Structure probing data (2A3 and DMS) for a 207-nucleotide construct. For DMS, 1,475 sequencing reads were counted. The data come from the RNA Mapping Database (RMDB), library OK3TST. The reactions ran in a buffer of 150 mM KOAc, 10 mM MgCl2 and 150 mM bicine (pH 8.5), at 24 C. DMS adducts were read by reverse transcription with MarathonRT.
RNA sequence: GGGAACGACUCGAGUAGAGUCGAAAAGUCAAAGGAACCCUGUACAUACCAGCCAAAGACAUUGACCGCCUACUAGGCAAAGCAGGCCACGGCCACACCCUAACCGGAAUCCCCGCCGCCGGGCGCAAGAAAAUAAAAACACACACACACGCCGCCCAAUACGAUCUUAGUUCGCUAAGAUCGUAUUAAAAGAAACAACAACAACAAC
Reactivity to 2A3 in 0.01 (KOAc 150mM, MgCl2 10mM, bicine 150mM(pH8.5), 24C), signal-to-noise 2, nucleotides 027 to 156: g020u020c020a120a000a070g050g050a170a140c010c000c020u040g040u040a090c070a120u140a050c010c090a020g020c010c020a050a190a000g070a050c020a050u030u140g030a080c030c040g040c000c020u040a110c030u110a100g030g010c000a060a170a000g020c060a030g030g000c000c020a040c070g020g000c000c020a050c000a010c030c000c030u030a050a040c020c020g000g010a030a030u080c000c000c000c060g040c040c030g000c020c060g050g030g000c010g000c020a050a040g080a060a100a020a010u230a030a080a020a030a020c040a030c020a010c000a000c000a000c010a000c030g040c010c060g000c010c030c020
Reactivity to DMS in 0.01 (KOAc 150mM, MgCl2 10mM, bicine 150mM(pH8.5), 24C), signal-to-noise 1, nucleotides 027 to 156: g000u010c010a110a120a130g010g010a040a300c000c040c030u000g000u020a130c080a130u000a070c020c010a110g000c030c010a080a110a090g040a100c020a170u000u030g010a070c010c010g010c020c030u000a100c060u000a110g000g070c110a100a140a060g020c090a080g040g080c040c100a100c040g040g030c010c010a120c070a150c000c030c020u010a090a030c080c060g000g000a080a120u020c000c000c000c000g000c030c020g040c010c010g010g000g050c030g070c030a000a110g020a050a060a080a090u030a010a000a050a100a030c040a060c010a040c010a100c000a080c080a080c040g030c000c020g040c010c010c000